[RMDB]
RNA sequence: GGGAACGACUCGAGUAGAGUCGAAAAGAUAUGGACAAAGUUAUUUGUCAGAGGUACGCUCGGAAACGAGCGACCUCUUGGAUUUAAAUUCUUUGUCCUAAGUCAAAGCCACCGUUCGCGGUGGCAAGUCACUCAUAAAGUUCGCUUUAUGAGUGACAAAAGAAACAACAACAACAAC
Reactivity to 2A3 in 0.01 (KOAc 150mM, MgCl2 10mM, bicine 150mM(pH8.5), 24C), signal-to-noise 3, nucleotides 027 to 126: g010a000u040a020u100g000g000a000c000a000a040a000g060u300u040a070u050u090u040g050u080c040a010g010a000g040g000u110a090c000g000c000u000c000g030g010a060a070a050c010g000a000g000c000g000a000c000c010u000c000u000u110g010g010a020u100u160u280a010a030a010u010u020c000u030u010u010g000u020c000c000u000a090a010g020u000c030a070a110a040g000c000c000a000c010c000g060u130u110c300g030c020g130g000u000g000g030c010a000a000
Reactivity to DMS in 0.01 (KOAc 150mM, MgCl2 10mM, bicine 150mM(pH8.5), 24C), signal-to-noise 3, nucleotides 027 to 126: g000a030u000a300u010g000g010a020c000a010a010a010g000u000u010a010u000u000u000g010u000c010a020g010a020g000g010u000a110c020g020c000u000c010g020g000a110a100a220c000g010a020g020c000g000a020c010c000u000c010u000u010g010g010a020u000u010u010a010a020a070u000u010c010u000u000u000g000u000c000c000u000a020a120g000u000c030a080a140a170g000c000c000a010c000c000g010u000u010c260g020c020g020g030u000g000g010c000a000a030